[RMDB]
RNA sequence: GGGAACGACUCGAGUAGAGUCGAAAAGUGUCCUUCGGGACACCUAGGCGGGGUCAUUCAAGGCCAUGGCAAGCGAAGAACGUACUGAAGCCUCCACGGUACGGGAGCUUGCAUGGCUGAAUGACGGAGGCACCCCAAGAACGCUAUUCGUAGCGAACCCCACCAUCGCUUUCGAGCGAUGGUGGGGAAAAGAAACAACAACAACAAC
Reactivity to 2A3 in 0.01 (KOAc 150mM, MgCl2 10mM, bicine 150mM(pH8.5), 24C), signal-to-noise 1, nucleotides 027 to 156: g010u000g020u010c000c000u000u030c260g060g000g000a000c020a020c000c010u070a130g130g010c130g000g010g070g000u100c020a010u030u150c210a300a240g080g000c000c000a010u010g100g050c000a000a000g000c000g130a140a000g010a000a040c000g000u000a000c000u060g060a250a040g030c000c000u000c000c010a010c010g010g030u000a010c000g050g000g020a000g000c020u020u030g010c010a000u000g000g000c000u000g010a010a010u000g030a030c010g000g010a000g000g000c000a060c000c000c000c000a040a000g070a180a000c000g000c000u010a020u050u070c150g200u060a000g040c050g030a100a150